The record gives the reactivity of an RNA of 177 nucleotides to DMS.

RNA sequence: GGGAACGACUCGAGUAGAGUCGAAAAGGAUCACGAGGGGGAGACCCCGGCGACCUGGGACGGACACCCAAGGUGCUCACACCGGAGACGGUGGAUCCGGCCCGAGAGGGCAACGAAGGUCCGACCAACUAUUAGCCGGUUUCGACCGGCUAAUAGUAAAAGAAACAACAACAACAAC
Reactivity to DMS in 0.01 (KOAc 150mM, MgCl2 10mM, bicine 150mM(pH8.5), 24C), signal-to-noise 2, nucleotides 027 to 126: g020g000a020u000c030a200c090g000a230g000g000g060g030g000a240g000a270c040c000c010c010g000g000c090g000a100c020c040u010g010g000g000a060c030g010g000a070c040a110c030c010c020a030a080g020g020u000g010c100u000c130a300c020a060c040c000g000g010a170g000a180c080g000g000u000g010g000a100u000c010c010g020g000c000c010c000g000a110g000a130g000g000g010c030a070a070c090g000a110a070g020g000u000c000c020g010a140c030c000a120
High DMS reactivity at an A or C suggests that its Watson-Crick edge is free.
Reactivities are given for positions 27 through 126.